RNA sequence: GGGAACGACUCGAGUAGAGUCGAAAAUAGCAUGGCUCCCCACUUCGUGAGUACCAAUGCUCGGCCAUGGUCAGAAGUUCAAGUCAUCGUCUUGGAACUGCUCAUCAAUCUGGUGACUGCCGCCAUACGACUGCUGCUGCGGCUUGUUUGCCAGCGGUGGCGAACGUAAGUUCGCUUACGUUCGCCAAAAAGAAACAACAACAACAAC
Reactivity to DMS in 0.01 (KOAc 150mM, MgCl2 10mM, bicine 150mM(pH8.5), 24C), signal-to-noise 2, nucleotides 027 to 156: u010a080g000c040a030u010g000g000c010u000c110c000c030c040a060c070u000u010c070g020u000g020a120g020u020a260c060c050a080a120u000g040c030u000c100g000g000c030c020a070u000g000g030u000c090a100g000a080a100g010u000u000c030a040a060g000u000c040a090u000c090g000u000c030u000u020g030g020a050a100c050u000g000c010u000c040a120u000c050a080a100u010c020u010g050g030u010g020a050c030u000g040c010c030g010c030c030a090u020a070c020g000a090c080u010g020c040u000g000c030u000g010c030g010g120c040u000u000g010u000u000u000g040c020c030a070g020c070g010g010
Reactivity to 2A3 in 0.01 (KOAc 150mM, MgCl2 10mM, bicine 150mM(pH8.5), 24C), signal-to-noise 2, nucleotides 027 to 156: u120a000g010c010a030u060g040g000c000u030c000c000c020c000a070c060u090u060c070g050u040g030a030g030u070a060c030c050a070a130u110g020c030u040c080g030g010c050c000a010u030g040g000u050c020a020g050a100a000g020u090u080c030a060a000g020u050c010a070u060c100g100u000c020u070u040g120g010a040a070c000u010g050c040u050c040a080u040c010a050a120u060c010u010g000g000u010g000a000c000u010g020c040c000g000c000c010a040u050a140c120g050a100c120u090g040c040u020g000c040u070g000c030g000g000c000u040u190g070u020u020u110g000c000c000a000g000c040g030g050
Chemical mapping of a 207-nucleotide RNA with DMS and 2A3. The reactions ran in a buffer of 150 mM KOAc, 10 mM MgCl2 and 150 mM bicine (pH 8.5), at 24 C. For DMS, 5,142 sequencing reads were counted. For 2A3, 912 sequencing reads were counted. The data come from the RNA Mapping Database (RMDB), library OK3TST. Reactivities are given for positions 27 through 156.